An RNA of 177 nucleotides, treated with 2A3 and DMS and read out base by base. For DMS the reverse transcriptase was MarathonRT.
RNA sequence: GGGAACGACUCGAGUAGAGUCGAAAAGCACAGGGUCCUUUUGCUGAAUUGGUUGACGGUGUCGUGUUGGAUGCGGAAAUGGGGUUGGGUCGGCAAGGUAGGCCUAUUGGGAUGUGAGUCAGCCGGAGGCACCAUACUAUUUCGAUAGUAUGGUGCCAAAAGAAACAACAACAACAAC
Reactivity to 2A3 in 0.01 (KOAc 150mM, MgCl2 10mM, bicine 150mM(pH8.5), 24C), signal-to-noise 2, nucleotides 027 to 126: g040c020a010c050a100g000g000g040u080c030c000u070u130u080u120g010c020u060g030a130a120u150u110g010g010u020u120g030a030c020g060g010u010g020u090c030g020u030g180u200u140g060g010a050u070g040c030g030g040a040a120a120u110g000g000g000g000u100u070g040g000g030u010c000g010g030c030a040a030g080g030u060a030g010g070c000c020u020a080u030u080g010g020g010a030u050g050u040g090a020g020u010c010a010g020c020c000g030g020a030
Reactivity to DMS in 0.01 (KOAc 150mM, MgCl2 10mM, bicine 150mM(pH8.5), 24C), signal-to-noise 5, nucleotides 027 to 126: g010c070a060c120a110g000g010g000u000c030c030u000u000u000u010g010c040u000g020a080a110u010u000g010g010u000u000g010a070c050g010g030u000g020u010c060g020u010g010u000u010g020g010a090u000g010c090g000g000a050a060a080u000g010g000g000g010u000u000g000g000g020u000c060g000g020c040a050a060g020g010u000a110g010g000c030c020u000a100u010u000g010g010g000a100u000g000u010g010a140g010u000c050a060g010c020c030g010g010a280
Source: RMDB library OK2TST, as collected in RNAgym. 2A3 adducts were read by reverse transcription with SuperScript II with manganese.